[RMDB]
The record gives the reactivity of an RNA of 177 nucleotides to 2A3 and DMS. It was measured as part of the RMDB library OK1LIB. Values cover nucleotides 27 to 126. Conditions: 150 mM KOAc, 10 mM MgCl2 and 150 mM bicine (pH 8.5), 24 C. The 2A3 profile rests on 4,139 reads.
RNA sequence: GGGAACGACUCGAGUAGAGUCGAAAAGAAGAUAAGAGACCAGACACCGUGGGCAGAUGACAAGAAAGUCCGUCGGUGACGGUAAGGUCGUCAGUCACAGGCGACCGUUUUCUGUGACUCUAAAGAAAGUAUAAUAUUAUUUCGAUAAUAUUAUACUAAAAGAAACAACAACAACAAC
Reactivity to 2A3 in 0.01 (KOAc 150mM, MgCl2 10mM, bicine 150mM(pH8.5), 24C), signal-to-noise 5, nucleotides 027 to 126: g060a030a010g030a020u130a100a030g030a000g050a070c000c000a000g020a040c000a000c010c000g010u020g000g010g000c020a020g060a300u120g050a130c060a110a090g080a140a040a010g020u010c000c010g120u130c020g040g000u010g010a020c020g020g110u080a090a040g000g010u000c000g000u000c020a010g140u090c040a040c050a100g000g000c010g000a020c000c010g000u080u010u030u000c000u010g040u060g030a060c010u000c010u060a070a080a030g050a070a200
Reactivity to DMS in 0.01 (KOAc 150mM, MgCl2 10mM, bicine 150mM(pH8.5), 24C), signal-to-noise 7, nucleotides 027 to 126: g010a070a040g010a060u010a140a100g010a130g010a070c010c000a070g040a120c060a010c010c010g040u010g010g010g010c010a050g020a160u040g020a180c300a130a140g000a070a200a110g000u000c000c010g000u020c010g020g010u000g010a080c110g010g000u010a040a060g010g010u000c000g010u000c000a040g020u050c290a080c280a120g010g010c010g010a010c000c010g010u000u000u000u000c010u010g010u020g000a070c000u000c030u020a030a070a170g000a100a070

For 2A3 the reverse transcriptase was SuperScript II with manganese.